The record gives the reactivity of an RNA of 177 nucleotides to 2A3 and DMS.
Conditions: 150 mM KOAc, 10 mM MgCl2 and 150 mM bicine (pH 8.5), 24 C.
For DMS, 827 sequencing reads were counted.
It was measured as part of the RMDB library OK2TRN.
[RMDB]
RNA sequence: GGGAACGACUCGAGUAGAGUCGAAAAGCAACAAUCACUGAUGUAGGUAACAGUGCGAAUAACGCUAGACAGCCAGCGUCAGAAGCUCUGAUAAGUGUUGUACCGGAAGAUAAUGAUUUUAAAUCAGUGUUCGUACUCGAUUCGUCGAGUACGAACAAAAAGAAACAACAACAACAAC
Reactivity to 2A3 in 0.01 (KOAc 150mM, MgCl2 10mM, bicine 150mM(pH8.5), 24C), signal-to-noise 1, nucleotides 027 to 126: g030c000a000a040c010a000a010u110c040a010c050u030g000a060u050g120u120a030g060g010u070a070a020c010a090g010u000g080c000g100a090a100u240a190a040c000g000c020u000a050g010a160c040a050g060c050c000a020g020c010g050u020c020a070g040a130a000g010c040u010c030u010g080a110u000a120a070g070u030g010u040u100g030u030a070c000c050g030g000a060a060g050a070u180a150a140u200g070a030u030u040u100u210a140a160a070u070c060a040g090
Reactivity to DMS in 0.01 (KOAc 150mM, MgCl2 10mM, bicine 150mM(pH8.5), 24C), signal-to-noise 1, nucleotides 027 to 126: g050c030a030a100c040a060a060u010c080a050c010u000g000a040u000g050u000a110g010g020u000a040a090c000a060g000u000g010c110g000a100a160u000a120a110c040g010c030u010a080g030a100c160a130g050c080c040a250g010c070g000u000c000a010g000a170a130g010c090u000c040u010g000a070u000a030a020g000u010g000u000u000g020u000a130c030c040g010g000a070a110g000a060u000a030a090u000g000a030u000u000u000u020a100a000a020u000c000a090g000